[RMDB]
RNA sequence: GGGAACGACUCGAGUAGAGUCGAAAAGAAGGUCAUAACGCACAAUGUAUCAACAACACAUUUGGCAAAAUGCACCGUUAAACAAGCCAGAACUAUGAUGCAGUUUGAGUUUUCACCAUUUGUAAUGGAUGAAUGUUUGUUUCGACAAACAUUCAUCAAAAGAAACAACAACAACAAC
Reactivity to DMS in 0.01 (KOAc 150mM, MgCl2 10mM, bicine 150mM(pH8.5), 24C), signal-to-noise 5, nucleotides 027 to 126: g010a080a100g010g000u010c030a020u020a020a150c160g000c080a090c040a050a010u010g020u020a060u030c120a080a140c300a100a150c180a050c060a020u000u000u020g000g000c030a040a080a080a030u000g000c120a060c030c020g010u000u020a050a060a060c130a100a100g010c010c050a070g000a010a060c110u000a060u010g000a070u010g000c040a020g010u000u000u020g000a130g000u010u010u010u020c060a080c020c000a040u030u010u010g010u040a060a060u020g010
Reactivity to 2A3 in 0.01 (KOAc 150mM, MgCl2 10mM, bicine 150mM(pH8.5), 24C), signal-to-noise 8, nucleotides 027 to 126: g150a060a040g000g010u050c030a040u030a120a020c060g010c020a060c010a090a030u010g010u030a060u120c080a080a130c030a100a040c020a040c000a170u050u030u090g030g000c000a050a090a040a020u110g010c080a040c050c030g020u030u120a090a100a040c030a080a010g030c010c000a020g030a050a030c020u060a090u190g030a080u080g030c040a030g030u040u060u070g040a050g030u020u010u090u060c120a100c030c030a080u040u080u100g140u190a140a130u180g120

Conditions: 150 mM KOAc, 10 mM MgCl2 and 150 mM bicine (pH 8.5), 24 C. Chemical mapping of a 177-nucleotide RNA with DMS and 2A3. DMS adducts were read by reverse transcription with MarathonRT. The DMS profile rests on 8,444 reads.